[RMDB]
RNA sequence: GGGAACGACUCGAGUAGAGUCGAAAAAGAAGUAAACUAAAUUUGGCCGAAAAUGACAAAAAUUGGAUGAAUCCUGAACGUCUGUGCUGCUUGGACUAGUCUCAUCUGGGUAAUUGGAGCAAGGGGACCGAACUAAAGCGUUCGCGCUUUAGUUCGGAAAAGAAACAACAACAACAAC
Reactivity to DMS in 0.01 (KOAc 150mM, MgCl2 10mM, bicine 150mM(pH8.5), 24C), signal-to-noise 1, nucleotides 027 to 126: a030g020a060a090g030u030a080a030a020c000u020a050a080a060u000u030u000g000g040c080c050g010a110a060a040a000u060g000a030c130a000a050a040a060a100u000u050g010g040a070u000g010a190a060u000c000c010u010g000a040a080c040g000u000c040u000g000u000g020c070u000g030c010u020u010g000g010a020c050u000a140g040u000c080u040c110a090u020c060u030g030g000g000u000a020a110u030u020g000g010a080g030c090a060a090g000g020g000g040a090
Reactivity to 2A3 in 0.01 (KOAc 150mM, MgCl2 10mM, bicine 150mM(pH8.5), 24C), signal-to-noise 1, nucleotides 027 to 126: a000g150a120a000g000u130a200a000a130c000u000a000a000a210u200u000u000g040g030c000c000g000a000a020a140a290u120g070a030c090a000a140a000a000a000u200u290g040g020a000u160g000a080a000u070c030c000u120g000a150a000c000g030u080c000u000g160u070g030c040u000g000c000u000u000g000g000a010c010u070a030g080u000c000u000c080a150u000c120u080g000g000g000u100a120a070u220u030g030g000a050g120c040a130a030g000g030g000g000a000
An RNA of 177 nucleotides, treated with DMS and 2A3 and read out base by base.
The DMS profile rests on 988 reads.
The RNA was probed in 150 mM KOAc, 10 mM MgCl2 and 150 mM bicine (pH 8.5) at 24 C.
For 2A3 the reverse transcriptase was SuperScript II with manganese.